[RMDB]
RNA sequence: GGGAACGACUCGAGUAGAGUCGAAAAGAUAUGGACACCAACAUUCUUGGAUUUAGUGAUGUUAACAAUGGUUAUCGGAAACGAUAACUGAUUAACAUCACUUGUCAGAAUGCUGGUGUCCUAAGUCCAUACGGUAACUCUUCGGAGUUACCGUAUGAAAAGAAACAACAACAACAAC
Reactivity to DMS in 0.01 (KOAc 150mM, MgCl2 10mM, bicine 150mM(pH8.5), 24C), signal-to-noise 2, nucleotides 027 to 126: g000a090u000a300u010g010g010a020c000a000c000c000a000a020c000a020u000u000c000u010u010g030g010a030u000u010u000a010g030u000g010a030u000g000u000u000a000a020c140a130a160u010g000g000u000u010a010u000c000g000g010a120a100a240c000g020a000u000a010a010c000u000g020a100u000u000a010a000c000a000u000c000a000c000u000u000g000u000c000a020g000a000a000u000g020c030u010g010g010u000g010u000c000c000u000a010a090g000u010c020
Reactivity to 2A3 in 0.01 (KOAc 150mM, MgCl2 10mM, bicine 150mM(pH8.5), 24C), signal-to-noise 3, nucleotides 027 to 126: g010a020u120a050u220g010g000a000c000a010c000c000a010a020c000a010u010u030c020u110u300g300g020a160u300u300u150a030g000u010g000a010u020g000u010u000a050a030c120a160a190u300g010g030u020u000a010u000c000g010g050a150a030a060c010g000a000u000a010a000c010u010g030a130u000u020a000a000c000a000u000c000a010c000u010u010g000u000c000a000g000a000a010u000g000c020u010g000g010u000g000u000c000c010u000a010a000g020u010c000
The record gives the reactivity of an RNA of 177 nucleotides to DMS and 2A3.
The DMS profile rests on 4,770 reads.
In probing experiments dimethyl sulfate is read out at A N1 and C N3, which are open when not base-paired.
It was measured as part of the RMDB library TTRINS.
Values are in units of 0.01, from 0 to 300, in steps of 10.
The reactions ran in a buffer of 150 mM KOAc, 10 mM MgCl2 and 150 mM bicine (pH 8.5), at 24 C.